[RMDB]
RNA sequence: GGGAACGACUCGAGUAGAGUCGAAAAGGACUCAAAAGGAAAAUACCAGUAGUGACAACUACUUAUGUAGAGCGUGUCAAGUUUGAGCUAGGGGUCAUUUCCAAAAAGGGUUAUAUCGACUACUUCCUUAUCGUGGCUGAUGCUAUCAAGUGGUGCACGUUCACUGUGAAUUCGUUCACAGUGAACGAAAAGAAACAACAACAACAAC
Reactivity to 2A3 in 0.01 (KOAc 150mM, MgCl2 10mM, bicine 150mM(pH8.5), 24C), signal-to-noise 2, nucleotides 027 to 156: g060g010a000c000u020c050a030a010a010a040g070g000a060a100a060a030u110a080c010c030a010g040u050a010g010u050g110a030c030a100a040c070u040a000c020u190u100a090u240g090u080a030g020a030g050c060g060u060g040u060c050a100a070g010u020u110u150g060a040g010c000u040a040g060g010g000g020u030c030a040u030u000u000c000c000a000a100a000a050a000g070g010g010u100u050a090u000a040u100c030g020a010c010u110a090c020u060u090c000c020u000u070a050u100c050g000u030g040g000c020u020g000a050u080g010c020u030a030u110c030a100a000g020u020g080g010u030g050c060a010
Reactivity to DMS in 0.01 (KOAc 150mM, MgCl2 10mM, bicine 150mM(pH8.5), 24C), signal-to-noise 1, nucleotides 027 to 156: g040g000a070c010u000c040a020a100a140a240g020g000a080a030a090a130u000a080c060c070a060g030u010a060g010u000g010a110c080a120a070c010u000a000c010u010u000a060u020g040u000a170g000a040g030c060g010u000g010u000c040a120a150g020u010u010u010g010a250g000c040u000a100g020g010g040g000u000c110a080u000u000u000c030c010a030a080a060a100a190g010g000g000u000u000a060u000a090u000c030g020a030c040u000a080c020u010u010c030c150u000u000a070u000c100g030u000g000g010c000u000g030a070u010g000c030u000a080u000c040a070a060g010u000g000g020u000g060c000a110